[RMDB]
RNA sequence: GGGAACGACUCGAGUAGAGUCGAAAACGCUGGGUUGACCGCAGAUAGGGAGAACUACGCUCCUGAAGCGCGCACGGGAGCGCUCCCUGUAGGUCUGCCUGUGCUGAAGCGCGCACGGCAACCGAAAGGUGCGAGACCCCGCCAUUCGUGGCGGGAAGGUCUCCAGAAAAUUCGUUUUCUGGAGACCAAAAGAAACAACAACAACAAC
Reactivity to 2A3 in 0.01 (KOAc 150mM, MgCl2 10mM, bicine 150mM(pH8.5), 24C), signal-to-noise 2, nucleotides 027 to 156: c020g030c010u030g000g000g050u020u030g040a000c030c040g140c280a050g070a290u230a060g000g040g020a020g010a130a000c070u110a110c300g000c010u000c000c000u030g000a160a030g000c020g000c000g020c010a020c020g020g000g010a010g080c010g020c060u040c080c000c070u050g040u040a000g000g000u010c000u020g030c000c000u040g060u050g000c030u000g030a120a000g000c000g000c000g000c010a000c000g080g000c010a090a120c010c000g040a050a060a040g000g040u030g010c020g030a060g030a110c010c000c010c050g010c000c000a050u060u100c260g060u030g010g040c010g000g010g000a030a000